[RMDB]
RNA sequence: GGGAACGACUCGAGUAGAGUCGAAAACCUCGUUAAUCAAUGGGAAAAACGUAACUGCAAACGACGAUACGUUCGCACUGGCAGCCUAAGGGCCGCCGUCCUCUGCCUAGUUCACUGACGGGCUAGUGUCGCAAGACCGGUAGCAAUACCGACAGAGCAUCGUCGGGAGCUUCGGCUCCCGACGAUGAAAAGAAACAACAACAACAAC
Reactivity to 2A3 in 0.01 (KOAc 150mM, MgCl2 10mM, bicine 150mM(pH8.5), 24C), signal-to-noise 1, nucleotides 027 to 156: c010c000u010c030g000u000u240a140a170u060c080a120a160u260g160g080g060a070a060a160a000a000c040g040u040a090a080c110u050g000c110a000a170a210c090g030a000c040g060a140u140a080c050g070u000u040c030g110c020a000c160u190g010g000c010a000g020c000c000u120a060a070g050g000g000c000c030g000c000c020g060u080c000c000u040c000u010g000c000c000u030a040g000u020u080c020a120c180u220g170a120c180g010g010g010c020u030a000g000u000g000u120c000g000c030a000a000g030a010c030c000g000g000u000a000g060c070a000a080u000a080c000c000g010a020c010a000g010a000g080